[RMDB]
RNA sequence: GGGAACGACUCGAGUAGAGUCGAAAACUUAUCAGUCCUUUUUAUAUCAAUGAGGAUACAAGUAUUUUAGAUAAUGCUCUAGCUAGUAUUCAAACUAAGCUGGAACAAGGUAAAUUGCGUGGCUUGUUGAAAAUUAAUGCCUUUCUUGACAUUGAUACGAUGUCUAUCGGUUCGCCGAUAGACAUCGAAAAGAAACAACAACAACAAC
Reactivity to 2A3 in 0.01 (KOAc 150mM, MgCl2 10mM, bicine 150mM(pH8.5), 24C), signal-to-noise 2, nucleotides 027 to 156: c040u080u140a070u130c030a100g050u060c000c000u180u070u000u000u020a200u050a030u050c060a050a080u140g010a060g020g000a000u010a100c090a040a040g060u050a120u020u190u040u090a090g050a080u140a150a080u110g030c010u000c010u030a000g000c000u010a050g020u030a230u040u140c220a250a100a100c000u080a130a000g000c050u010g000g000a020a000c020a000a080g070g040u110a100a140a150u170u080g110c110g060u040g000g030c000u030u060g050u020u020g030a070a000a000a180u100u050a030a050u050g000c000c010u050u110u070c100u020u080g010a060c010a090u020u110g080a090u080a090